RNA sequence: GGGAACGACUCGAGUAGAGUCGAAAAAGCAACCAGAUCCGCGACUACAUUAACAGAUUCGGGGAGAACCAACGGCACCGUCUCGUCGACGUGAUGGACUCUGACCGAUGGGACGCGCGCGAUUUUGGGGAAACUGAGACUGCCAUUCUCAGCAAAAAUCCUAUCUGGGUUUCGACCCAGAUAGGAUAAAAGAAACAACAACAACAAC
Reactivity to 2A3 in 0.01 (KOAc 150mM, MgCl2 10mM, bicine 150mM(pH8.5), 24C), signal-to-noise 2, nucleotides 027 to 156: a000g050c040a040a030c000c010a000g000a040u000c020c030g040c020g090a110c090u160a050c050a200u300u300a190a050c050a110g160a120u030u060c030g000g000g010g020a020g020a040a120c020c000a020a020c050g010g010c020a030c020c040g090u040c080u060c120g150u080c090g030a060c040g040u060g050a090u050g060g020a050c020u000c000u000g170a070c010c010g000a030u040g020g000g050a050c050g000c030g000c020g020c050g060a060u150u060u090u010g000g000g000g000a030a030a030c020u020g000a000g000a010c050u070g060c030c000a060u070u030c020u020c020a050g000c040a020a020a050a070
Reactivity to DMS in 0.01 (KOAc 150mM, MgCl2 10mM, bicine 150mM(pH8.5), 24C), signal-to-noise 1, nucleotides 027 to 156: a130g000c050a100a230c010c000a030g000a070u000c000c020g000c030g020a260c080u010a120c040a140u000u060a010a120c030a060g010a170u010u000c060g000g030g010g050a080g050a120a110c000c050a090a130c110g000g000c000a230c080c060g000u000c110u010c000g020u000c030g020a060c060g000u010g000a080u000g040g010a300c100u000c060u010g010a130c150c010g020a160u000g020g010g040a140c110g000c050g000c000g000c120g000a010u000u000u010u010g040g000g000g020a190a060a020c020u010g010a070g000a070c160u020g030c040c040a300u000u000c000u000c000a020g020c040a000a000a130a110